[RMDB]
RNA sequence: GGGAACGACUCGAGUAGAGUCGAAAACGGAAGCAUUAAAACCAUUCGAGCUAGUCAAUGCGUGGCGUGUCUCUCCGCAGCGUGUUGGCGAAUGUAAAGAGUGACUAAGCAUGUAAUACCGAGGAUGAUAAGAGCAAUUCGUUCGCGAAUUGCUCAACUAUCUCCACACGUUCGCGUGUGGAGAUAGAAAAGAAACAACAACAACAAC
Reactivity to DMS in 0.01 (KOAc 150mM, MgCl2 10mM, bicine 150mM(pH8.5), 24C), signal-to-noise 1, nucleotides 027 to 156: c020g000g020a180a170g000c020a040u000u020a040a160a140a100c020c010a100u000u010c080g010a210g030c030u000a160g000u010c030a020a000u000g000c000g030u010g020g060c040g050u010g010u010c030u010c040u010c300c050g010c010a010g000c010g010u000g030u000u040g000g010c010g010a100a030u050g000u000a050a060a140g100a080g030u000g030a040c070u000a100a290g000c140a040u000g000u010a060a100u010a090c040c010g030a150g040g000a190u010g010a200u000a090a110g010a020g000c010a010a000u010u000c010g030u000u010c290g000c010g010a020a020u010u000g030c000u000c000a000a080
Reactivity to 2A3 in 0.01 (KOAc 150mM, MgCl2 10mM, bicine 150mM(pH8.5), 24C), signal-to-noise 4, nucleotides 027 to 156: c060g030g030a040a020g040c030a020u080u110a070a050a020a060c020c010a020u070u060c050g000a020g020c020u080a030g020u020c000a000a000u010g000c000g020u040g080g000c010g000u090g060u040c030u020c030u030c070c010g000c000a010g000c000g010u010g020u000u010g010g000c020g010a030a010u070g020u080a070a080a020g010a010g010u000g030a020c020u040a060a010g040c020a040u060g040u140a110a040u050a120c020c060g000a050g080g020a030u140g020a010u120a230a140g000a000g000c000a000a000u000u000c010g010u040u080c210g010c010g100a000a000u000u000g000c000u000c000a000a000
Conditions: 150 mM KOAc, 10 mM MgCl2 and 150 mM bicine (pH 8.5), 24 C. Chemical mapping of a 207-nucleotide RNA with DMS and 2A3. DMS (dimethyl sulfate) methylates the pairing face of unpaired adenines and cytosines. 2A3 adducts were read by reverse transcription with SuperScript II with manganese. For DMS the reverse transcriptase was MarathonRT.